The record gives the reactivity of an RNA of 207 nucleotides to 2A3 and DMS. For 2A3 the reverse transcriptase was SuperScript II with manganese. The DMS profile rests on 2,089 reads. The data come from the RNA Mapping Database (RMDB), library M2RFPK. For DMS the reverse transcriptase was MarathonRT.
RNA sequence: GGGAACGACUCGAGUAGAGUCGAAAAUCGGACGGCGGCCAUGAGUCGCAACGCAAAGCCGCGGCAAGUGGAGUUAGCGAUAAGAGACUAGGCUUUGGUUUCUUCAAGUGAAGCGGUCACCAAUCAGAAUAGCUUGCGCAGUUCGCUGCGCAAGCAAACUUUAGCAUUACUUCGGUAAUGCUAAAGUAAAAGAAACAACAACAACAAC
Reactivity to 2A3 in 0.01 (KOAc 150mM, MgCl2 10mM, bicine 150mM(pH8.5), 24C), signal-to-noise 2, nucleotides 027 to 156: u040c010g000g040a010c010g020g010c010g060g030c030c000a060u090g020a030g030u000c010g010c010a030a010c040g060c120a090a090a010g050c030c030g020c010g000g020c030a050a040g010u040g090g000a060g050u060u140a070g020c010g010a030u060a130a030g040a010g010a040c030u070a050g060g040c000u050u120u120g020g010u040u030u000c010u060u020c050a110a000g010u040g100a060a020g040c010g050g010u030c010a020c050c040a010a070u120c010a020g090a240a100u160a110g010c010u010u000g000c000g000c000a000g030u050u100c150g020c120u000g000c000g000c000a000a000g000c000a000a000
Reactivity to DMS in 0.01 (KOAc 150mM, MgCl2 10mM, bicine 150mM(pH8.5), 24C), signal-to-noise 1, nucleotides 027 to 156: u010c040g000g010a090c030g010g010c020g010g000c020c010a070u020g000a300g020u010c030g000c040a050a060c050g050c040a120a110a250g030c000c030g030c050g000g000c020a110a250g000u010g000g000a160g000u000u010a100g020c000g020a110u020a080a080g000a100g020a070c020u000a100g020g010c110u010u000u010g020g000u010u000u000c030u010u030c030a020a120g000u000g020a160a080g020c000g040g050u000c060a050c050c000a010a190u010c050a140g000a080a150u020a110g010c010u010u000g040c000g000c000a030g000u000u000c270g000c020u000g000c030g020c010a000a010g000c000a010a070